[RMDB]
The data come from the RNA Mapping Database (RMDB), library 15KLIB.
The record gives the reactivity of an RNA of 170 nucleotides to DMS and 2A3.
For DMS, 9,885 sequencing reads were counted.
RNA sequence: GGGAACGACUCGAGUAGAGUCGAAAAAUUCACGAUUUUUGGGGUUGUUUAACAAGUAUAAGUACUUCUCUGGUGCUAUGGAAACAGCCGCUUAUCGUGAAGCUGCAGCAUGUCAUCUUGCUAAAGCGUAUCGAGAGCUUCGGCUCUCGAAAAAGAAACAACAACAACAAC
Reactivity to DMS in 0.01 (KOAc 150mM, MgCl2 10mM, bicine 150mM(pH8.5), 24C), signal-to-noise 3, nucleotides 027 to 129: a140u020u040c030a050c000g020a000u010u060u060u000u030g010g000g040g020u060u000g000u010u000u110a050a130c000a010a020g010u040a060u000a060a010g040u030a030c090u080u000c160u060c080u050g000g010u000g010c000u010a070u070g000g080a030a050a000c000a000g000c000c030g060c000u020u010a110u020c010g000u030g030a020a110g020c020u050g040c300a010g000c000a070u020g000u080c260a140u000c000u030u000g030c010u000a100a140a060g000c020g000u050a000
Reactivity to 2A3 in 0.01 (KOAc 150mM, MgCl2 10mM, bicine 150mM(pH8.5), 24C), signal-to-noise 4, nucleotides 027 to 129: a030u020u000c000a000c000g000a000u020u020u030u110u210g040g040g000g000u000u000g060u030u050u030a090a070c020a000a000g050u010a080u020a150a080g000u000a030c050u140u210c070u020c110u250g090g000u020g000c000u010a030u160g020g000a020a000a000c000a000g010c010c070g110c080u040u010a010u000c000g000u000g010a000a020g010c000u020g000c010a000g000c020a000u030g080u180c050a120u060c090u080u000g000c000u020a020a030a010g080c030g010u020a090
DMS adducts were read by reverse transcription with MarathonRT. The reactions ran in a buffer of 150 mM KOAc, 10 mM MgCl2 and 150 mM bicine (pH 8.5), at 24 C. For 2A3 the reverse transcriptase was SuperScript II with manganese. Values cover nucleotides 27 to 129.